[RMDB]
RNA sequence: GGGAACGACUCGAGUAGAGUCGAAAAGCAAGCUAGCCGGCAAAAAAGCAAACUUGACCACCAGGGAUAAAAGAGAUCUUAUCCAAGGAUGCAAAAGAUAAUCUCACUUUUGACACCCACUGAUCUCAAAACGUGCGGUUCUUCGGAACCGCACGAACACAUAGUGCCUGUUCGCAGGCACUAUGUGAAAAGAAACAACAACAACAAC
Reactivity to 2A3 in 0.01 (KOAc 150mM, MgCl2 10mM, bicine 150mM(pH8.5), 24C), signal-to-noise 3, nucleotides 027 to 156: g030c010a010a000g000c010u040a010g010c010c030g140g060c170a110a120a100a070a020a010g050c050a100a060a010c040u060u070g080a120c010c010a040c020c010a080g000g050g030a010u020a040a060a010a010g010a010g010a010u020c010u030u050a030u020c060c020a050a070g020g010a060u060g000c010a010a020a010a000g020a050u100a140a150u160c090u050c090a060c020u020u030u000u040g090a060c020a020c010c000c020a030c120u090g010a010u000c010u000c000a030a070a040a050c020g000u000g000c000g010g040u010u000c000u020u050c120g080g000a000a010c000c000g000c000a000c010g000a000a000
Reactivity to DMS in 0.01 (KOAc 150mM, MgCl2 10mM, bicine 150mM(pH8.5), 24C), signal-to-noise 1, nucleotides 027 to 156: g000c040a020a020g020c000u000a300g000c000c050g000g000c050a000a010a080a060a260a030g000c020a150a110a030c000u010u000g010a100c000c010a150c020c020a030g000g040g010a150u000a030a030a100a080g000a060g020a070u000c010u000u010a030u040c110c090a140a070g030g050a070u000g030c010a030a010a000a000g010a060u010a070a080u020c120u010c060a270c040u000u000u000u000g000a150c000a040c000c010c000a260c210u010g000a130u000c030u000c000a070a000a080a200c030g030u020g020c020g020g010u000u000c010u020u020c270g060g000a010a010c000c000g000c030a000c010g040a020a120